[RMDB]
RNA sequence: GGGAACGACUCGAGUAGAGUCGAAAAGAGCUAAUAUCUACUUCGUUUGUGCAUACGUUCAAGCUCACUAUAGGGAAGCUGAUGGGUUGCGAGAAAUCGCAGUGCCUAGUGGAAUGAACGGCUCGAAGGGUUAUGUUUUCUUCGGAAAACAUAACCCAAAAGAAACAACAACAACAAC
Reactivity to 2A3 in 0.01 (KOAc 150mM, MgCl2 10mM, bicine 150mM(pH8.5), 24C), signal-to-noise 2, nucleotides 027 to 126: g070a030g000c040u030a000a010u040a160u160c030u090a060c010u030u100c030g170u040u150u070g120u120g010c040a040u060a100c010g030u040u070c010a060a010g020c000u000c020a010c000u130a110u150a130g010g040g090a080a010g000c000u030g010a140u040g060g010g040u080u010g000c010g000a010g060a060a050a020u040c000g000c040a000g000u060g180c020c000u000a010g000u020g000g070a000a030u020g020a000a040c010g020g000c000u020c020g030a060a020
Reactivity to DMS in 0.01 (KOAc 150mM, MgCl2 10mM, bicine 150mM(pH8.5), 24C), signal-to-noise 2, nucleotides 027 to 126: g000a040g010c030u020a060a150u040a120u010c040u010a050c070u020u020c110g010u000u010u030g010u000g020c140a100u070a060c070g050u020u000c050a070a000g000c050u010c020a200c040u000a170u000a100g000g020g000a070a070g020c100u000g040a110u010g030g000g040u000u030g030c000g000a030g030a070a030a080u000c000g000c000a000g010u000g000c000c010u030a050g050u000g020g000a210a080u000g000a080a060c110g000g000c000u000c040g030a150a110